[RMDB]
RNA sequence: GGGAACGACUCGAGUAGAGUCGAAAAGAUAUGGAGAGCACCUUUCGCUUGGAUUUAUACAGUGUACAUAUCGGAAACGAUAUGGAGCCUGUAUUGUCAGCGAAAGUUGCUCUCCUAAGUCAAAAGAAAAGAUAUGGCUUCGGCCAUAUCUUUUCAACGAAUUAGUGCUGUUCGCAGCACUAAUUCGAAAAGAAACAACAACAACAAC
Reactivity to 2A3 in 0.01 (KOAc 150mM, MgCl2 10mM, bicine 150mM(pH8.5), 24C), signal-to-noise 2, nucleotides 027 to 156: g030a030u040a020u110g000g000a020g000a010g020c000a010c000c010u000u010u000c010g020c040u110u180g110g020a050u170u300u070a020u040a000c010a000g020u050g010u220a010c000a000u000a000u000c000g030g020a090a100a030c010g000a000u010a000u010g030g000a040g150c000c010u000g000u000a000u010u000g000u000c010a000g020c010g000a000a000a000g000u000u000g000c000u000c000u000c000c000u000a000a000g000u000c000a000a000a010a100g010a000a000a000a000g010a000u010a000u000g010g000c020u090u160c300g010g000c000c000a000u000a000u000c000u000u000u000u010c000a000a000
Reactivity to DMS in 0.01 (KOAc 150mM, MgCl2 10mM, bicine 150mM(pH8.5), 24C), signal-to-noise 1, nucleotides 027 to 156: g000a100u000a270u000g000g020a080g000a020g030c050a000c100c020u000u000u000c010g000c050u000u010g000g020a030u000u000u000a020u000a020c000a020g020u010g040u000a300c000a000u000a010u000c010g010g020a150a110a300c000g030a060u000a010u000g040g000a260g040c300c010u010g010u000a000u000u010g010u000c020a050g000c020g000a010a010a030g000u010u000g040c000u000c000u000c000c010u020a000a050g010u010c030a050a050a190a180g000a030a010a000a030g000a020u000a010u000g010g000c030u010u010c300g020g000c010c010a010u000a000u000c000u010u000u010u000c020a040a220

An RNA of 207 nucleotides, treated with 2A3 and DMS and read out base by base. The data come from the RNA Mapping Database (RMDB), library RNAMAK.